This 177-nucleotide RNA was probed chemically with 2A3 and DMS. The reactions ran in a buffer of 150 mM KOAc, 10 mM MgCl2 and 150 mM bicine (pH 8.5), at 24 C. It was measured as part of the RMDB libraries RFM100 and RFMREP.

[RMDB]
RNA sequence: GGGAACGACUCGAGUAGAGUCGAAAAGGUUUAAAAGUAUUUGACACCGUUUAUGUGGAAGCGUUUACUUGGACCCCAAACGUAGUUGUCUGGUUAGCUCUAGUUCUUAGAGGAUCAAAGUAGAGGAUCUAUUCAGACAGUUCGCUGUCUGAAUAGAAAAAGAAACAACAACAACAAC
Reactivity to 2A3 in 0.01 (KOAc 150mM, MgCl2 10mM, bicine 150mM(pH8.5), 24C), signal-to-noise 2, nucleotides 027 to 126: g040g000u040u040u040a060a060a030a000g030u100a120u000u100u160g080a060c020a040c040c010g040u160u000u000a150u170g030u090g020g040a020a050g080c110g040u030u100u040a010c000u010u120g040g000a120c000c030c000c080a030a040a000c000g020u020a030g050u060u180g080u070c000u020g070g080u040u080a200g000c000u000c000u000a130g000u090u010c030u030u210a100g000a010g100g000a040u040c060a000a250a080g110u160a070g030a010g020g050a010
Reactivity to DMS in 0.01 (KOAc 150mM, MgCl2 10mM, bicine 150mM(pH8.5), 24C), signal-to-noise 4, nucleotides 027 to 126: g010g000u010u010u010a080a060a040a080g000u000a040u010u010u000g010a140c050a090c020c060g010u020u010u010a090u040g020u020g030g010a080a080g020c110g010u010u000u000a030c030u000u020g010g000a120c030c010c010c050a050a080a110c140g020u010a050g010u000u000g010u010c060u000g020g010u000u000a080g010c020u000c000u000a010g000u030u020c080u040u000a030g000a040g010g000a040u020c060a070a060a100g010u000a050g010a120g000g000a130